Structure probing data (2A3 and DMS) for a 170-nucleotide construct. Reactivities are given for positions 27 through 129. The RNA was probed in 150 mM KOAc, 10 mM MgCl2 and 150 mM bicine (pH 8.5) at 24 C. The 2A3 profile rests on 72,363 reads. It was measured as part of the RMDB library 15KLIB.
RNA sequence: GGGAACGACUCGAGUAGAGUCGAAAACCAUGCCGACCCGAAGAGGAAAGGAAGGACACAGACGCGAACCGUGAGUGGAACCCUCGAUCCUUUAUUGGGGGGUACACUCGAGGAGUGGAAGGCGGGGAGACACGGUAGUUCGCUACCGUGAAAAGAAACAACAACAACAAC
Reactivity to 2A3 in 0.01 (KOAc 150mM, MgCl2 10mM, bicine 150mM(pH8.5), 24C), signal-to-noise 9, nucleotides 027 to 129: c010c000a020u090g010c000c020g040a050c010c000c020g040a060a030g030a020g030g000a050a020a010g040g020a010a030g000g000a020c040a010c020a110g090a050c050g050c050g080a050a030c020c010g070u090g050a010g000u020g000g020a110a040c000c000c000u010c000g030a050u120c050c120u180u270u250a060u080u060g010g000g000g000g010g010u080a010c000a000c000u010c000g010a020g010g010a030g010u130g020g020a010a010g020g000c030g000g000g000g010a030g010a010
Reactivity to DMS in 0.01 (KOAc 150mM, MgCl2 10mM, bicine 150mM(pH8.5), 24C), signal-to-noise 9, nucleotides 027 to 129: c010c010a090u040g030c050c000g010a090c040c010c020g010a060a030g030a060g030g000a050a060a050g010g020a060a040g000g010a060c170a090c120a070g030a100c070g020c020g020a080a100c020c040g040u020g030a000g000u040g000g030a170a180c000c010c000u020c000g000a030u030c240c140u050u050u060a060u030u030g000g020g020g000g020g010u040a040c020a000c010u000c000g000a060g000g010a070g040u020g000g000a040a030g030g010c080g000g000g000g000a050g010a100